Chemical mapping of a 177-nucleotide RNA with DMS and 2A3. DMS adducts were read by reverse transcription with MarathonRT. 2A3 adducts were read by reverse transcription with SuperScript II with manganese. The reactions ran in a buffer of 150 mM KOAc, 10 mM MgCl2 and 150 mM bicine (pH 8.5), at 24 C. Reactivities are rounded to 0.1 and cut off at 0 and 3.
[RMDB]
RNA sequence: GGGAACGACUCGAGUAGAGUCGAAAAGGUGGCUCUGAGAGAAGGCUCAACACAACCGUGACAGAGUCACCGAUUUAGCAUGUUCGUCCUACUAUAGGACCUCCUAAGGUGUAGGACGUUCAUGCGAGGGAUGCAUUACCUUCGGGUAGUGCAUCCCAAAAGAAACAACAACAACAAC
Reactivity to DMS in 0.01 (KOAc 150mM, MgCl2 10mM, bicine 150mM(pH8.5), 24C), signal-to-noise 8, nucleotides 027 to 126: g010g020u000g000g000c000u010c010u020g000a160g020a180g010a120a160g000g000c090u010c120a110a160c300a060c200a100a120c060c050g000u020g000a300c020a010g000a000g020u010c000a010c000c010g010a020u030u010u010a100g010c000a000u000g010u000u010c000g000u000c000c000u010a010c000u010a070u020a030g000g000a220c250c300u030c010c010u000a020a080g000g020u020g000u000a000g000g000a000c000g000u000u000c000a000u000g000c000g000a100
Reactivity to 2A3 in 0.01 (KOAc 150mM, MgCl2 10mM, bicine 150mM(pH8.5), 24C), signal-to-noise 9, nucleotides 027 to 126: g010g000u000g000g000c000u000c000u010g100a130g010a010g080a290a100g080g000c050u070c130a170a130c060a020c020a100a180c050c050g070u040g030a030c000a010g000a000g000u010c000a000c000c000g000a000u000u010u040a010g000c000a000u000g000u000u000c000g000u000c000c010u000a010c010u030a010u020a120g060g050a190c020c020u300c010c010u070a120a090g240g010u080g020u020a000g000g000a000c000g000u000u000c000a000u000g000c000g000a070